[RMDB]
RNA sequence: GGGAACGACUCGAGUAGAGUCGAAAAGCAGUUCCAGAGUGUGAGGACUCUGAACUCGAAGGUAGAUGACCUCCUCACAGGUCAAAGUGAUAUUGAUUGGCAAGUAUCAGGAUCACACUACCGACAUACUUGUCAAUGUCAACUCGAGGAACUGAGAUAAUCAGUGGUAUUUCGAUACCACUGAUUAAAAAGAAACAACAACAACAAC
Reactivity to DMS in 0.01 (KOAc 150mM, MgCl2 10mM, bicine 150mM(pH8.5), 24C), signal-to-noise 6, nucleotides 027 to 156: g020c030a030g030u000u000c020c000a120g010a070g020u000g010u000g010a080g010g010a130c090u000c010u010g020a100a050c020u000c060g010a110a130g020g020u000a070g020a280u000g010a080c030c040u000c020c030u010c070a110c160a080g000g020u000c030a050a050a090g020u000g020a090u000a080u000u000g010a080u000u000g020g020c010a030a030g000u000a030u000c030a240g010g010a160u000c140a090c160a200c100u000a150c010c010g000a120c250a060u000a020c030u000u000g000u000c020a030a040u000g020u000c020a080a090c020u000c090g010a140g030g000a040a060c020u000g010a100g010a230
Reactivity to 2A3 in 0.01 (KOAc 150mM, MgCl2 10mM, bicine 150mM(pH8.5), 24C), signal-to-noise 9, nucleotides 027 to 156: g050c000a000g000u000u000c010c000a010g000a010g030u050g000u010g020a020g010g010a020c010u000c030u090g050a090a050c040u040c120g100a120a050g090g050u170a060g020a200u090g030a050c000c020u020c010c000u020c010a010c020a010g000g070u050c060a100a070a050g110u080g080a040u060a060u190u090g070a020u010u020g010g000c010a000a000g010u000a010u020c080a070g020g040a050u150c080a050c030a040c210u150a130c020c000g020a020c020a040u010a000c000u010u020g000u000c000a000a020u020g010u030c010a020a050c020u000c010g050a120g010g010a000a010c010u020g010a010g010a110
An RNA of 207 nucleotides, treated with DMS and 2A3 and read out base by base.
Conditions: 150 mM KOAc, 10 mM MgCl2 and 150 mM bicine (pH 8.5), 24 C.